[RMDB]
RNA sequence: GGGAACGACUCGAGUAGAGUCGAAAAAUUCCUUCUUAUCCUGCACUCAGUUUGUUCAUUGACUGUGGAGCCUGGAAAUGGAGGAGAAAGUAAAUUUGAUGAUUACUAAUACUUCGCUGUCUUUAGAUUCAUGCUCCAGAUUCGUCUGGAGCAUGAAAAAAGAAACAACAACAACAAC
Reactivity to 2A3 in 0.01 (KOAc 150mM, MgCl2 10mM, bicine 150mM(pH8.5), 24C), signal-to-noise 4, nucleotides 027 to 126: a000u040u030c000c000u000u020c020u040u090a090u030c000c000u000g010c000a000c020u000c000a000g010u020u050u040g260u280u130c130a210u250u180g010a000c000u000g040u010g040g010a130g030c000c140u100g000g030a010a020a020u130g000g000a020g020g010a040g100a000a070a020g000u070a010a150a170u140u130u150g140a280u030g030a040u040u110a070c030u040a010a040u040a150c050u030u130c100g030c100u080g020u090c000u040u030u040a090g020a120
Reactivity to DMS in 0.01 (KOAc 150mM, MgCl2 10mM, bicine 150mM(pH8.5), 24C), signal-to-noise 2, nucleotides 027 to 126: a170u020u000c000c000u000u000c020u000u000a300u010c000c000u010g000c030a150c000u010c000a000g000u010u000u050g000u040u080c300a150u040u010g000a000c060u000g050u010g000g000a290g000c010c150u020g000g030a020a130a020u010g010g000a000g020g020a000g000a080a090a020g000u010a010a000a040u000u020u000g000a100u020g000a030u000u020a070c110u000a110a050u020a080c110u020u020c030g030c030u000g040u010c010u000u000u000a060g080a170

This 177-nucleotide RNA was probed chemically with 2A3 and DMS. The RNA was probed in 150 mM KOAc, 10 mM MgCl2 and 150 mM bicine (pH 8.5) at 24 C. 2A3 is a SHAPE reagent: it acylates the 2'-hydroxyl of flexible nucleotides of all four kinds. Source: RMDB library RFM100, as collected in RNAgym.